Chemical mapping of a 207-nucleotide RNA with DMS and 2A3. For 2A3, 1,055 sequencing reads were counted. Values cover nucleotides 27 to 156. It was measured as part of the RMDB library OK3TST. 2A3 is a SHAPE reagent: it acylates the 2'-hydroxyl of flexible nucleotides of all four kinds. 2A3 adducts were read by reverse transcription with SuperScript II with manganese. For DMS, 1,939 sequencing reads were counted.
RNA sequence: GGGAACGACUCGAGUAGAGUCGAAAAGAUGGAGGGUCCGGCCUCGGACACCUCCUAUAAGAUGUAACUAUUACGAGGCCAUUAAUGGCGUUUUCGCCUAGGUGCACGACGGCGUGCGUGACACCGUAAGACUUAAUGAAUAACACGCCGGAUACAAAUUUUAUACGGGAUUCGUCCCGUAUAAAAUAAAAGAAACAACAACAACAAC
Reactivity to DMS in 0.01 (KOAc 150mM, MgCl2 10mM, bicine 150mM(pH8.5), 24C), signal-to-noise 1, nucleotides 027 to 156: g010a110u000g000g000a070g050g000g030u000c000c000g020g020c010c010u010c020g060g030a030c010a110c010c000u040c010c000u000a030u010a110a120g010a240u000g030u000a170a160c070u000a150u000u030a130c000g000a020g000g030c010c000a300u000u000a100a120u010g030g000c000g030u000u000u000u000c020g020c000c000u000a210g010g020u000g030c040a090c010g010a050c000g020g000c000g030u000g000c010g020u010g000a230c030a130c020c030g000u010a080a150g010a160c130u000u000a060a190u010g000a240a130u000a100a080c030a020c040g020c010c010g000g040a170u000a090c060a040a120
Reactivity to 2A3 in 0.01 (KOAc 150mM, MgCl2 10mM, bicine 150mM(pH8.5), 24C), signal-to-noise 2, nucleotides 027 to 156: g070a040u120g010g000a000g000g010g000u000c010c010g050g010c000c000u030c020g010g000a010c040a130c010c000u040c020c000u020a030u030a040a000g090a010u160g040u060a050a050c070u030a050u150u130a030c010g020a000g000g010c000c000a000u090u160a070a130u140g000g030c010g020u060u020u090u300c020g050c000c010u020a160g000g010u000g000c000a000c000g010a000c000g010g000c030g030u000g010c000g010u000g060a090c000a010c000c000g070u010a060a000g020a010c030u060u110a020a020u130g160a140a060u050a120a010c000a000c000g010c000c000g010g000a010u010a010c030a000a300